RNA sequence: GGGAACGACUCGAGUAGAGUCGAAAACGCAGAGGGUUCUGAUAACAAAGAACCUAGAUAGCCGCAUCGGUAUUAUAGGAUGUAGUCGGUGAGCCGGAGUGCCUGCAUCGUAAGCCUAUAAGUAAAUUUAAGUGUAAUCACUUCGGUGAUUACACAAGAUUUCAGAAGAGUUCGCUCUUCUGAAAUCAAAAGAAACAACAACAACAAC
Reactivity to DMS in 0.01 (KOAc 150mM, MgCl2 10mM, bicine 150mM(pH8.5), 24C), signal-to-noise 1, nucleotides 027 to 156: c070g060c020a220g040a220g030g030g070u010u000c010u000g010a210u000a120a250c300a080a210a060g000a050a040c000c000u000a000g010a170u010a090g040c060c020g000c050a120u010c090g000g030u000a060u000u000a070u000a030g010g010a060u000g020u010a100g040u010c010g000g040u000g000a040g000c000c020g000g080a200g030u000g000c050c000u020g000c010a040u020c020g000u000a020a080g010c030c030u060a050u020a030a020g010u000a060a060a230u000u000u000a060a180g030u000g010u000a000a020u000c000a000c010u000u000c260g040g000u000g020a030u000u000a000c000a000c010a000a050
Reactivity to 2A3 in 0.01 (KOAc 150mM, MgCl2 10mM, bicine 150mM(pH8.5), 24C), signal-to-noise 3, nucleotides 027 to 156: c070g020c040a050g070a110g080g000g020u020u000c010u010g070a090u100a240a040c020a070a130a000g010a000a010c010c000u000a010g010a070u070a030g050c070c050g080c120a090u170c090g060g010u060a040u120u030a040u070a070g010g040a030u080g000u070a050g070u090c030g000g000u030g010a000g010c000c040g140g010a080g000u130g030c010c020u040g060c010a010u030c000g040u030a060a000g000c000c010u060a070u030a080a050g100u120a060a080a120u180u190u120a180a040g000u000g000u000a000a010u000c000a000c010u010u020c150g020g000u010g000a000u000u000a000c000a000c000a000a000